[RMDB]
RNA sequence: GGGAACGACUCGAGUAGAGUCGAAAAGUAGGUCUCCUGUCCAACCCGCAAGCUCAUGUAUCAGGAGUUCGAUUCCUAUACCAGUGCCAGUCUAUACAGGUAAGUCAUGGCUCAUAAAGGAUCACUAAACCUUGCAAAGCCUAGAUUGUCUUAUCAGGUGAAUUAAUACGUUCGCGUAUUAAUUCACAAAAGAAACAACAACAACAAC
Reactivity to DMS in 0.01 (KOAc 150mM, MgCl2 10mM, bicine 150mM(pH8.5), 24C), signal-to-noise 3, nucleotides 027 to 156: g020u000a060g000g010u010c030u000c020c030u010g000u000c080c040a060a130c020c030c030g050c070a070a140g010c040u010c040a090u000g020u000a090u010c060a060g020g010a040g030u000u010c110g000a160u000u000c010c030u000a110u000a080c030c060a120g040u000g040c030c030a080g020u000c070u000a110u000a090c040a000g000g040u010a030a120g000u010c040a110u000g010g020c010u000c040a080u000a090a040a040g010g020a150u000c060a120c090u040a070a080a110c000c010u000u000g020c100a140a040a070g010c010c020u010a170g000a100u020u000g000u000c060u010u010a160u000c080a140g010
Reactivity to 2A3 in 0.01 (KOAc 150mM, MgCl2 10mM, bicine 150mM(pH8.5), 24C), signal-to-noise 5, nucleotides 027 to 156: g070u060a030g010g050u020c010u000c030c010u030g050u040c020c030a060a050c040c020c030g040c080a050a040g010c050u060c050a070u120g030u080a090u100c060a020g020g020a010g000u030u050c040g050a100u040u080c000c000u040a040u040a080c020c040a030g010u000g090c030c010a010g020u040c040u070a110u010a130c040a000g040g000u040a050a000g010u030c010a080u090g010g000c000u000c030a030u240a030a070a000g010g000a040u110c020a060c160u160a120a140a150c000c010u010u030g060c090a050a050a030g010c010c000u070a050g020a210u090u140g040u020c010u080u100a090u090c040a080g170
Structure probing data (DMS and 2A3) for a 207-nucleotide construct. Reactivities are given for positions 27 through 156. The DMS profile rests on 5,200 reads.